Structure probing data (DMS and 2A3) for a 177-nucleotide construct. Values cover nucleotides 27 to 126. 2A3 adducts were read by reverse transcription with SuperScript II with manganese. For DMS, 1,746 sequencing reads were counted. High DMS reactivity at an A or C suggests that its Watson-Crick edge is free. The RNA was probed in 150 mM KOAc, 10 mM MgCl2 and 150 mM bicine (pH 8.5) at 24 C.

RNA sequence: GGGAACGACUCGAGUAGAGUCGAAAACGCGAGGAGGGCGAGUACACUGUGGAGACCGCUGGCGCUAAGUCAGAGGAAGGAUUGGUCGACGGUAGGUCAGUAUGCCCCGAAUAUCCCGGGCUACACGGCUCGAACUUGUUUUCGAACAAGUUCGAGCAAAAGAAACAACAACAACAAC
Reactivity to DMS in 0.01 (KOAc 150mM, MgCl2 10mM, bicine 150mM(pH8.5), 24C), signal-to-noise 2, nucleotides 027 to 126: c090g030c200g000a140g000g000a080g000g000g000c050g000a100g040u010a060c030a040c130u030g050u010g010g010a090g070a100c030c000g000c010u020g000g000c080g000c220u060a000a010g000u020c000a050g020a100g000g000a150a140g000g000a060u000u020g080g000u010c020g000a030c060g000g000u030a130g010g000u010c060a060g000u000a080u040g000c040c000c000c100g040a020a150u080a250u000c080c000c140g030g000g000c040u010a040c090a240c110g010
Reactivity to 2A3 in 0.01 (KOAc 150mM, MgCl2 10mM, bicine 150mM(pH8.5), 24C), signal-to-noise 1, nucleotides 027 to 126: c020g070c030g010a080g060g040a030g020g030g030c030g000a060g010u090a020c030a000c040u140g040u040g040g040a040g000a000c000c020g010c000u000g000g010c040g000c060u160a110a080g040u020c000a010g020a010g170g010a060a020g030g070a150u050u090g020g000u000c010g000a050c000g100g000u150a090g020g010u020c000a000g000u020a060u150g000c020c020c000c000g000a040a060u120a070u070c000c030c000g000g000g000c030u070a060c030a020c140g000